RNA sequence: GGGAACGACUCGAGUAGAGUCGAAAACGAAAGAUGGGGACGGGAAACCACAAGUUUCAGAUAGUUUCGUUGAUUCAAGCUCCUAGUUUUUUUGGCGCUUCCUUAAGAUCUUGAUUCUCUACUAAACUACCCUUUAUACCUUCGGGUAUAAAGGGUAAAAAGAAACAACAACAACAAC
Reactivity to DMS in 0.01 (KOAc 150mM, MgCl2 10mM, bicine 150mM(pH8.5), 24C), signal-to-noise 5, nucleotides 027 to 126: c070g000a060a060a060g000a090u020g010g000g010g000a070c030g000g000g020a040a020a050c000c050a110c240a120a240g010u000u000u000c030a080g000a100u000a060g010u010u000u010c050g000u010u010g000a110u000u020c070a040a060g010c040u000c030c050u000a060g010u000u000u020u000u000u040u030g000g000c060g030c050u000u010c040c010u000u020a070a100g000a050u010c030u000u010g000a130u010u000c020u000c030u020a060c090u020a030a060a100c150
Reactivity to 2A3 in 0.01 (KOAc 150mM, MgCl2 10mM, bicine 150mM(pH8.5), 24C), signal-to-noise 5, nucleotides 027 to 126: c020g010a020a000a010g070a060u070g010g000g000g010a010c040g030g030g050a030a030a040c030c020a040c060a120a060g010u000u030u030c050a050g020a200u080a110g060u010u020u020c030g000u020u060g030a060u000u080c040a030a020g010c020u030c020c010u040a160g030u020u020u010u000u010u100u150g030g020c020g010c020u060u060c010c000u060u030a050a060g020a120u040c020u050u040g020a060u210u030c010u010c010u070a120c060u050a060a040a030c010